Chemical mapping of a 177-nucleotide RNA with 2A3 and DMS. For DMS, 2,241 sequencing reads were counted.
RNA sequence: GGGAACGACUCGAGUAGAGUCGAAAAGCAACAAGAGGCCCAUGUAGUCGAAGUUUUCCGACGCUGCCGGGCGAUCUCUUGGGAACACGAUCGCCGCCAAGACGAGCGCGGACAGCCCGACCGGCAGGUUUGACAGGCUGUUCGCAGCCUGUCAAACAAAAGAAACAACAACAACAAC
Reactivity to 2A3 in 0.01 (KOAc 150mM, MgCl2 10mM, bicine 150mM(pH8.5), 24C), signal-to-noise 2, nucleotides 027 to 126: g020c020a000a100c000a040a080g050a040g130g050c000c050c030a030u120g070u070a060g030u000c040g030a150a040g000u000u000u050u070c080c030g040a080c020g040c020u080g080c030c000g080g000g030c020g010a040u020c010u040c010u110u090g050g020g020a070a040c090a020c120g040a070u000c010g000c040c030g010c040c020a070a050g120a040c070g040a020g000c000g000c000g020g020a020c000a010g020c020c000c000g030a040c000c010g010g040c040a030g100
Reactivity to DMS in 0.01 (KOAc 150mM, MgCl2 10mM, bicine 150mM(pH8.5), 24C), signal-to-noise 3, nucleotides 027 to 126: g010c080a090a100c040a060a060g010a100g040g020c010c020c030a100u010g020u010a120g000u000c030g000a120a140g010u000u000u000u000c020c020g010a140c090g010c020u010g010c050c150g000g000g010c000g000a020u000c020u000c050u010u000g000g010g020a090a110c070a070c180g010a050u010c020g030c000c010g010c110c090a080a140g000a080c070g000a040g000c030g010c020g020g000a070c070a050g010c020c040c000g000a090c030c020g010g000c140a030g010